[RMDB]
RNA sequence: GGGAACGACUCGAGUAGAGUCGAAAAUCGUAUACAUUACCGUUUGAAACCAGUACUUGUUUCAUAGGCGUGAUUUAUGAAUUGCACAUUUAAAGUAUUGUCACAUAUUUCAAUGGGUUGAGAUACAUGAUAAUAGCUCAUUCGUGAGCUAUUAUCAAAAAGAAACAACAACAACAAC
Reactivity to 2A3 in 0.01 (KOAc 150mM, MgCl2 10mM, bicine 150mM(pH8.5), 24C), signal-to-noise 8, nucleotides 027 to 126: u070c020g000u020a010u010a040c030a040u080u150a160c010c010g030u010u040u100g020a020a020a010c050c010a020g020u030a040c030u050u080g080u100u110u050c050a050u050a070g080g000c080g120u080g110a160u020u050u060a070u050g090a050a050u120u140g050c060a040c030a100u150u210u140a070a040a010g020u020a030u020u050g060u080c030a030c010a140u160a090u060u060u020c020a020a030u050g090g040g000u030u050g050a100g010a160u020a040c050a080
Reactivity to DMS in 0.01 (KOAc 150mM, MgCl2 10mM, bicine 150mM(pH8.5), 24C), signal-to-noise 9, nucleotides 027 to 126: u010c130g010u000a030u000a040c060a050u010u010a090c010c010g010u000u000u000g010a030a030a070c280c050a030g000u000a020c050u000u000g010u000u010u000c080a050u000a060g010g010c110g030u010g000a060u000u000u000a040u010g000a040a040u010u010g010c090a060c120a080u010u000u000a080a040a030g000u000a020u000u000g000u010c140a090c160a110u000a140u010u000u000c030a020a030u000g000g010g010u000u000g010a150g000a040u000a020c050a160
Chemical mapping of a 177-nucleotide RNA with 2A3 and DMS. It was measured as part of the RMDB library OK2TST. Values cover nucleotides 27 to 126.